Structure probing data (DMS and 2A3) for a 207-nucleotide construct. Source: RMDB library M2RFPK, as collected in RNAgym. The reactions ran in a buffer of 150 mM KOAc, 10 mM MgCl2 and 150 mM bicine (pH 8.5), at 24 C.
[RMDB]
RNA sequence: GGGAACGACUCGAGUAGAGUCGAAAAAGGUUCGCUGUGGUGCAACUCUUAUUAGUAACUAAUCCAAAGCAAGUAUAGGAGAACAGGUUUUUAACUAUUUUUAGGCCGAUAAAAAAUAGUAUUUGACAAAAUCGAUUGUCGUUCGCGACAAUCGAAACAUUUCAGGUAAGUUCGCUUACCUGAAAUGAAAAGAAACAACAACAACAAC
Reactivity to DMS in 0.01 (KOAc 150mM, MgCl2 10mM, bicine 150mM(pH8.5), 24C), signal-to-noise 1, nucleotides 027 to 156: a080g010g040u000u000c050g060c030u010g040u010g010g020u010g010c000a060a120c050u000c020u000u000a030u000u000a050g010u000a070a080c040u000a040a100u000c110c050a040a160a090g010c040a070a140g010u000a080u010a050g010g010a070g000a070a070c060a090g010g010u000u000u010u010u000a100a090c010u000a010u000u000u000u000u000a120g010g020c050c040g060a140u040a000a000a000a010a010a000u000a020g000u000a140u000u000u000g040a140c080a050a110a040a170u000c000g000a020u000u000g010u000c000g000u000u000c300g030c060g010a030c010a010a000u010c000g010a010a050a140
Reactivity to 2A3 in 0.01 (KOAc 150mM, MgCl2 10mM, bicine 150mM(pH8.5), 24C), signal-to-noise 3, nucleotides 027 to 156: a000g030g010u020u020c030g010c020u020g030u050g050g050u030g020c020a030a070c020u020c020u080u090a100u080u090a070g050u050a060a100c060u050a110a050u060c030c020a100a030a010g030c030a090a020g030u040a070u060a100g060g020a050g010a090a100c180a250g000g000u000u000u020u000u020a020a010c000u000a010u000u010u010u000u040a070g150g000c010c010g050a040u160a020a020a000a000a010a000u000a000g010u010a090u110u080u070g050a020c020a000a110a030a110u010c010g000a000u000u000g000u010c010g010u020u060c240g000c000g090a000c000a000a010u000c000g000a000a010a000